[RMDB]
Chemical mapping of a 177-nucleotide RNA with 2A3 and DMS. DMS adducts were read by reverse transcription with MarathonRT. The RNA was probed in 150 mM KOAc, 10 mM MgCl2 and 150 mM bicine (pH 8.5) at 24 C.
RNA sequence: GGGAACGACUCGAGUAGAGUCGAAAAGCGUGAGCUGAAGGCAAGUGCGUAUGCAAAUGCAUCCGAGAAACUGCAGUCGGUGGAGGAUAACUUUUUUGAGGUACUUACCAAGCGCAGCGACUCGUUGCCACGUAUGGCUGUUCGCAGCCAUACGUGGAAAAGAAACAACAACAACAAC
Reactivity to 2A3 in 0.01 (KOAc 150mM, MgCl2 10mM, bicine 150mM(pH8.5), 24C), signal-to-noise 2, nucleotides 027 to 126: g000c000g000u040g030a090g000c030u020g000a070a000g040g030c040a070a100g070u060g020c010g010u020a030u040g010c070a100a000a100u220g000c030a000u000c010c000g040a000g030a080a130a000c000u050g000c020a080g090u230c190g030g000u050g040g050a000g020g020a030u110a180a100c060u120u190u010u000u020u300g030a040g000g010u030a040c000u030u010a000c020c000a000a010g080c020g000c040a000g000c000g010a050c010u030c020g020u020u060g020
Reactivity to DMS in 0.01 (KOAc 150mM, MgCl2 10mM, bicine 150mM(pH8.5), 24C), signal-to-noise 1, nucleotides 027 to 126: g000c000g000u030g000a060g030c020u010g000a210a120g000g000c050a000a070g000u000g000c080g080u000a010u000g080c010a030a030a050u000g000c010a110u000c030c000g010a040g000a080a070a140c030u000g030c020a010g000u000c300g000g000u000g000g030a110g000g000a080u090a030a070c000u000u000u000u000u030u020g000a190g000g000u110a060c030u040u000a000c030c080a020a130g030c230g030c000a010g000c040g060a300c000u000c030g060u000u000g000